[RMDB]
RNA sequence: GGGAACGACUCGAGUAGAGUCGAAAAGUAUCACUCCACAACUGCCUCAAAACCAUAACACAGCAUUAGGCAGUAGCUUCUUAUGAACACGGAGCAAUUCUUUUCGUGUCUGUGUAUCUAGCUCCUGCCAGAAAGAUUGCUUAAUACCGUGCUGUUAUCCACUAAUAGGCUUCGGCCUAUUAGUGGAAAAAGAAACAACAACAACAAC
Reactivity to DMS in 0.01 (KOAc 150mM, MgCl2 10mM, bicine 150mM(pH8.5), 24C), signal-to-noise 1, nucleotides 027 to 156: g030u000a050u000c070a110c170u000c010c040a100c070a100a090c120u010g000c000c000u010c020a030a050a190a170c030c080a070u000a080a070c060a140c080a040g020c040a080u000u010a140g000g030c000a030g000u000a040g010c000u000u020c040u000u020a040u000g000a100a050c010a020c010g050g000a050g070c150a080a210u000u020c020u010u000u000u000c040g020u000g000u020c070u010g030u010g020u000a050u030c040u000a070g050c010u000c120c030u000g000c050c020a110g010a060a040a080g030a080u010u010g020c020u000u000a130a100u010a140c030c070g010u010g010c030u000g000u000u010a200
Reactivity to 2A3 in 0.01 (KOAc 150mM, MgCl2 10mM, bicine 150mM(pH8.5), 24C), signal-to-noise 3, nucleotides 027 to 156: g070u080a030u260c020a010c040u040c010c030a060c010a070a100c040u040g090c000c030u130c060a090a110a090a070c030c050a090u060a150a080c090a000c020a070g010c010a040u060u150a120g000g000c000a000g000u020a010g000c000u110u180c050u120u200a120u220g000a020a000c000a000c010g000g030a020g040c020a050a140u190u180c110u170u260u120u160c080g000u020g170u040c000u000g040u000g020u050a220u050c020u040a010g010c010u000c000c000u000g000c000c000a000g120a010a040a010g080a040u040u190g000c060u110u110a170a030u030a130c070c050g000u000g010c000u000g010u020u030a040